[RMDB]
RNA sequence: GGGAACGACUCGAGUAGAGUCGAAAAAUUCACUCCAGCCUAACCAGUUAACGCCAUGUCUUCGAACCAGGGCAAACGGUGGACAAGUUUCGAACCGCCAGAGUAGGAAUGUUCGCCGCGCUGCUGCCUUUCGUAAUAGUCAACAGACUAGCGCGAGCACCCUUCCAAAUUUCGAUUUGGAAGGGUGAAAAGAAACAACAACAACAAC
Reactivity to 2A3 in 0.01 (KOAc 150mM, MgCl2 10mM, bicine 150mM(pH8.5), 24C), signal-to-noise 3, nucleotides 027 to 156: a020u040u040c010a010c050u000c000c020a020g020c010c020u080a040a060c000c010a050g010u060u090a070a000c030g000c030c030a030u100g040u070c050u120u070c110g040a030a030c030c030a050g000g100g000c050a070a080a010c040g020g000u010g000g000a000c020a090a110g030u000u030u160c060g030a070a030c040c040g060c070c050a020g040a030g110u080a030g010g070a050a070u080g020u030u030c020g000c000c000g040c010g000c010u130g000c010u020g020c000c000u040u070u060c030g000u000a050a050u010a050g040u040c040a040a080c090a300g020a040c020u020a010g010c010g000c010g070a000g020
Reactivity to DMS in 0.01 (KOAc 150mM, MgCl2 10mM, bicine 150mM(pH8.5), 24C), signal-to-noise 1, nucleotides 027 to 156: a100u000u000c040a070c030u010c000c030a140g040c030c000u000a070a110c030c020a240g010u000u000a060a100c000g020c010c020a060u020g000u010c010u000u020c040g020a110a140c070c030a140g020g000g040c020a070a080a060c010g030g040u000g030g020a060c000a160a140g010u000u000u000c070g010a070a140c020c030g010c080c060a130g010a120g000u000a140g010g000a120a060u000g000u000u000c000g010c020c010g000c060g040c050u010g000c050u000g000c020c050u000u000u020c050g070u000a060a130u010a040g000u010c010a080a180c210a100g000a070c010u000a020g030c100g030c010g000a150g060
Annotation
Conditions: 150 mM KOAc, 10 mM MgCl2 and 150 mM bicine (pH 8.5), 24 C. The record gives the reactivity of an RNA of 207 nucleotides to 2A3 and DMS. 2A3 adducts were read by reverse transcription with SuperScript II with manganese. The DMS profile rests on 1,981 reads. Values cover nucleotides 27 to 156.